[RMDB]
RNA sequence: GGGAACGACUCGAGUAGAGUCGAAAACUCCACGCUGGGUAAUGGACGACGGCGGCGUGUGGCGAACAGGGAUAUCGGUAGUCAGUGUCUGGAACAUCCCAAGGGGCGGCGGAGCUAGCACCCCGACAAAACGGGCACAAGUUCGCUUGUGCCCGAACUUGAAUAUUCCGUUCGCGGAAUAUUCAAGAAAAGAAACAACAACAACAAC
Reactivity to 2A3 in 0.01 (KOAc 150mM, MgCl2 10mM, bicine 150mM(pH8.5), 24C), signal-to-noise 1, nucleotides 027 to 156: c030u040c000c000a030c000g020c030u080g050g010g030u160a170a120u020g070g000a030c000g010a020c040g020g070c020g000g010c000g030u100g040u040g050g020c030g010a110a060c110a130g000g020g010a010u040a000u100c080g000g040u020a010g080u080c010a000g020u000g000u110c030u050g000g000a030a030c010a070u020c020c020c020a040a060g030g000g020g000c040g020g000c040g070g030a060g000c020u050a010g050c040a040c020c000c000c000g040a000c040a000a120a050a040c000g010g000g000c010a000c000a000a030g000u020u070c230g030c140u000u040g000u020g000c000c000c000g000a000a000